The record gives the reactivity of an RNA of 177 nucleotides to DMS and 2A3. Source: RMDB library OK2TST, as collected in RNAgym.
RNA sequence: GGGAACGACUCGAGUAGAGUCGAAAAUAUGAACCUCACAACAGUCUAUCUCCUCCUAUAGGUGCCCAGUCAAGAUUUACUGAAUGACAUAACGGAUCCUGCAAGCCUGCAGGUUUCCAGAGGGAAGAACAACAUAACACUUCGGUGUUAUGUUGUUAAAAGAAACAACAACAACAAC
Reactivity to DMS in 0.01 (KOAc 150mM, MgCl2 10mM, bicine 150mM(pH8.5), 24C), signal-to-noise 6, nucleotides 027 to 126: u010a070u000g010a130a190c040c010u010c050a080c070a080a130c110a070g010u000c040u010a110u000c030u010c030c030u000c020c030u000a100u000a070g010g010u000g010c020c020c010a100g010u000c070a080a070g010a120u000u000u000a060c100u010g010a120a100u000g020a060c100a080u010a080a120c180g000g010a030u010c010c010u010g000c010a040a170g000c210c140u000g030c000a000g000g000u000u000u000c000c010a100g010a120g010g010g010a120a110g010
Reactivity to 2A3 in 0.01 (KOAc 150mM, MgCl2 10mM, bicine 150mM(pH8.5), 24C), signal-to-noise 2, nucleotides 027 to 126: u300a080u090g050a070a050c020c010u040c000a050c040a130a000c010a040g070u020c020u040a190u040c040u020c010c000u040c030c010u110a090u060a140g070g030u050g050c000c000c020a020g020u040c020a060a000g010a140u070u130u070a070c030u020g040a050a110u070g020a010c000a020u080a040a010c060g010g000a010u020c000c000u000g000c000a050a070g160c030c070u040g000c000a010g000g000u010u070u010c000c000a000g040a000g050g050g000a010a050g020
The RNA was probed in 150 mM KOAc, 10 mM MgCl2 and 150 mM bicine (pH 8.5) at 24 C. For 2A3, 2,155 sequencing reads were counted. For DMS the reverse transcriptase was MarathonRT.